[RMDB]
RNA sequence: GGGAACGACUCGAGUAGAGUCGAAAAGUCGGCGUGAUGUUCGGCGGGCUCUUCUCCGACUGGCUGCUGCGCCGCGGUCGAUCGGCGAACGUCGCGCGCAAGCUGCCGAUCAUCGCGGGCCUGCUGAGCUAUUAGUAUCCUUCGGGAUACUAAUAGCAAAAGAAACAACAACAACAAC
Reactivity to 2A3 in 0.01 (KOAc 150mM, MgCl2 10mM, bicine 150mM(pH8.5), 24C), signal-to-noise 5, nucleotides 027 to 126: g040u000c000g000g020c040g080u130g080a100u150g100u190u080c020g020g000c000g010g010g000c010u040c010u190u030c060u040c030c020g020a030c030u050g000g000c000u010g000c010u040g000c050g020c020c040g000c010g000g020u120c050g010a170u080c060g120g110c060g070a050a030c030g060u140c050g020c010g000c000g010c050a000a070g000c000u040g000c000c000g020a060u030c020a030u050c040g030c060g030g020g020c000c000u010g000c000u010g030a010
Reactivity to DMS in 0.01 (KOAc 150mM, MgCl2 10mM, bicine 150mM(pH8.5), 24C), signal-to-noise 6, nucleotides 027 to 126: g010u000c040g000g020c170g020u000g000a070u010g010u000u000c030g000g010c020g000g010g000c010u000c030u000u000c050u010c070c050g010a050c050u000g010g010c020u000g000c040u010g000c030g020c060c040g010c000g000g010u000c050g010a210u010c100g000g010c040g010a070a070c070g020u000c050g040c090g000c030g000c050a060a070g010c030u000g010c000c000g010a060u010c080a060u000c110g010c200g010g010g000c010c020u000g000c020u000g000a130